[RMDB]
RNA sequence: GGGAACGACUCGAGUAGAGUCGAAAACAGAUGCCGUUCGCGGCAUCUGAAAGUGACGCUGAAAAAUGGCCAAGGUGCCAGCUACCACCGACACAGGGCGCAAAAGAGGAUUCUUCGGAAUCCUCAAGCUCGUAAUUUAGUUCGCUAAAUUACGAGCAAAAGAAACAACAACAACAAC
Reactivity to DMS in 0.01 (KOAc 150mM, MgCl2 10mM, bicine 150mM(pH8.5), 24C), signal-to-noise 2, nucleotides 027 to 126: c020a010g010a020u000g000c000c000g000u000u020c180g090c000g010g000c010a000u000c000u030g020a030a040a100g020u000g000a070c060g040c020u000g010a040a040a030a090a050u000g020g000c030c020a190a130g000g000u000g050c020c010a010g000c070u000a080c040c070a060c050c040g000a130c100a080c040a060g000g000g020c030g020c180a060a050a120a140g010a010g000g000a010u000u000c000u000u000c250g000g000a010a000u000c000c000u000c000a000a060
Reactivity to 2A3 in 0.01 (KOAc 150mM, MgCl2 10mM, bicine 150mM(pH8.5), 24C), signal-to-noise 1, nucleotides 027 to 126: c000a000g000a000u000g000c020c010g000u030u060c210g030c040g180g000c020a000u000c000u020g000a040a000a000g050u060g060a040c030g010c030u000g020a070a070a010a070a100u050g040g000c010c020a150a140g150g010u160g030c010c010a010g000c010u010a000c020c000a010c010c020g050a000c010a000c010a110g000g090g000c020g000c070a000a000a030a110g020a000g000g000a010u000u020c010u030u060c270g110g020a010a000u030c000c000u000c000a000a000
Structure probing data (DMS and 2A3) for a 177-nucleotide construct. The RNA was probed in 150 mM KOAc, 10 mM MgCl2 and 150 mM bicine (pH 8.5) at 24 C. The DMS profile rests on 1,346 reads.